[RMDB]
RNA sequence: GGGAACGACUCGAGUAGAGUCGAAAAGUGCAAGACCAGUAAACCGAGAAGAUAGUCGAGAGCAAUUCAACUGGCUGGGCAGGAUUAGGUACACCAGGUCAGCUGGUUGGGUGUGGUAUCCCUGCUCCGUCAGUAGCGUAUUCGUACGCUACUGACGAAAAGAAACAACAACAACAAC
Reactivity to 2A3 in 0.01 (KOAc 150mM, MgCl2 10mM, bicine 150mM(pH8.5), 24C), signal-to-noise 3, nucleotides 027 to 126: g120u090g030c030a010a150g030a050c000c000a050g030u120a060a170a060c060c010g040a030g020a160a030g030a080u150a040g090u040c090g080a020g000a000g100c020a060a030u110u040c010a050a060c050u020g000g000c000u030g020g030g000c010a110g010g030a030u090u270a100g020g160u180a040c020a080c000c000a020g030g300u130c010a010g060c000u060g000g010u020u010g040g010g010u060g020u060g000g040u050a100u060c000c000c020u000g010c040u030c020
Reactivity to DMS in 0.01 (KOAc 150mM, MgCl2 10mM, bicine 150mM(pH8.5), 24C), signal-to-noise 3, nucleotides 027 to 126: g000u010g000c130a040a070g000a130c040c010a080g010u010a080a120a110c040c000g010a060g030a110a040g010a070u040a030g000u010c080g010a130g000a120g020c060a100a040u010u000c020a070a070c020u000g000g000c030u020g020g020g020c000a040g000g010a100u020u050a090g020g010u020a060c170a080c020c010a020g020g000u000c090a030g010c060u000g000g010u010u020g000g000g000u000g010u020g000g000u010a090u000c040c030c000u000g020c030u000c040